[RMDB]
RNA sequence: GGGAACGACUCGAGUAGAGUCGAAAACGGAAACGGCUUCCGAACAAGAGCUUCUCAACCUGAUCGAAGGCCUCAAUAACGACCCCGCCAUUCAUGGCAUUCUGGUUCAGUUGCCUUUGCCGGGGCAACUGCAUUAGUGAUUCGUCACUAAUGCAGUAAAAGAAACAACAACAACAAC
Reactivity to 2A3 in 0.01 (KOAc 150mM, MgCl2 10mM, bicine 150mM(pH8.5), 24C), signal-to-noise 9, nucleotides 027 to 126: c020g030g040a040a050a020c050g030g000c020u060u000c020c020g020a020a010c040a070a030g050a020g040c030u160u060c060u050c060a050a090c010c020u040g020a070u050c030g030a030a010g030g000c020c010u080c090a060a150u150a130a050c060g150a210c010c000c010c010g000c010c000a050u120u110c050a050u100g010g000c010a010u160u040c030u080g300g000u130u120c020a020g010u030u020g010c000c000u030u020u040g020c020c010g000g000g010g000c010a010
Reactivity to DMS in 0.01 (KOAc 150mM, MgCl2 10mM, bicine 150mM(pH8.5), 24C), signal-to-noise 9, nucleotides 027 to 126: c060g010g000a070a110a150c300g010g000c020u000u000c020c010g010a060a100c070a060a060g010a110g010c070u000u000c130u000c130a080a070c040c010u000g000a080u000c030g000a050a060g000g010c010c010u000c150a050a050u010a080a110c090g000a140c010c000c020c050g020c140c010a040u010u010c180a080u010g000g000c010a040u010u000c040u000g010g010u010u010c070a050g010u000u000g010c000c000u000u000u000g020c260c020g000g000g010g010c060a040